[RMDB]
This 207-nucleotide RNA was probed chemically with 2A3 and DMS.
The DMS profile rests on 4,563 reads.
DMS (dimethyl sulfate) methylates the pairing face of unpaired adenines and cytosines.
For DMS the reverse transcriptase was MarathonRT.
The 2A3 profile rests on 1,086 reads.
RNA sequence: GGGAACGACUCGAGUAGAGUCGAAAAUUGCACAGACUGGAGUGGAUAAUUUACUAUGACUUCUCGCCAGCUUAAAGAAGAACCGUAUCAACCUUCAGUUACUGAAGUUCAUGAGUUGCCCAGGAAUAAAAGAAAAAGGGCUUAUAAAGAUGAAAAGCAUAUGGAACAAAUUCGUUUGUUCCAUAUGAAAAGAAACAACAACAACAAC
Reactivity to 2A3 in 0.01 (KOAc 150mM, MgCl2 10mM, bicine 150mM(pH8.5), 24C), signal-to-noise 2, nucleotides 027 to 156: u080u090g000c000a020c020a030g030a030c020u040g030g010a020g010u070g020g040a040u030a130a070u120u120u120a090c050u070a100u170g050a090c020u040u000c030u040c030g060c020c050a050g040c070u090u100a030a110a000g020a020a000g000a030a000c030c010g010u050a030u070c020a020a100c010c000u000u020c020a000g030u100u100a050c040u070g030a080a010g020u050u060c050a050u090g070a030g140u080u060g040c000c000c000a000g000g010a010a030u110a130a070a030a040g070a000a110a000a010a020g040g000g000c010u050u020a080u020a050a120a030g080a070u160g070a170a060a020a000g040
Reactivity to DMS in 0.01 (KOAc 150mM, MgCl2 10mM, bicine 150mM(pH8.5), 24C), signal-to-noise 3, nucleotides 027 to 156: u000u010g000c040a080c040a160g000a050c000u000g010g010a060g030u010g000g010a150u020a060a090u000u010u000a130c080u000a110u010g010a200c090u000u000c020u000c030g020c040c030a090g020c060u010u000a070a070a110g010a140a090g000a110a110c040c070g020u000a100u000c030a040a090c050c010u000u010c000a110g000u000u010a120c070u010g010a030a040g020u000u000c040a060u000g010a130g010u000u000g000c030c040c050a110g030g030a090a130u000a050a050a100a100g020a070a060a060a080a120g010g030g050c020u000u000a030u000a100a060a170g000a080u000g010a030a050a050a240g010